[RMDB]
RNA sequence: GGGAACGACUCGAGUAGAGUCGAAAACUUUUGGCACCCCGUCAACGCCCGCCUUUGGCGCAUCAGCUCCAGGAUUUGGAGGCUUCGGAAGCGCGGCGUCUUCUGCGUCAGCAUUCGGGACGCCCACGGAGAUCGAUAAUUUCGAUUAUCGAUCUCCAAAAGAAACAACAACAACAAC
Reactivity to DMS in 0.01 (KOAc 150mM, MgCl2 10mM, bicine 150mM(pH8.5), 24C), signal-to-noise 4, nucleotides 027 to 126: c080u000u000u000u000g000g010c070a130c020c020c030c040g000u000c140a080a100c070g000c020c020c030g020c050c040u000u000u010g020g010c060g010c030a090u000c120a150g010c010u010c010c010a050g030g010a190u010u010u010g030g010a040g020g010c030u000u000c090g010g020a070a060g010c060g020c130g010g000c010g010u000c040u010u000c090u010g000c050g010u000c150a070g010c030a110u000u010c090g000g000g020a070c030g020c000c020c160a060c220
Reactivity to 2A3 in 0.01 (KOAc 150mM, MgCl2 10mM, bicine 150mM(pH8.5), 24C), signal-to-noise 3, nucleotides 027 to 126: c030u100u080u170u090g060g010c050a050c010c000c020c030g030u010c030a020a050c050g000c000c010c000g000c030c000u090u060u090g100g000c030g000c020a070u090c040a040g060c010u020c010c010a060g170g060a260u170u040u070g060g020a050g080g020c020u070u040c040g060g050a070a020g020c050g000c070g040g010c000g020u010c000u080u040c020u040g020c010g050u090c050a040g020c010a040u100u130c010g020g000g040a020c040g000c000c020c000a040c060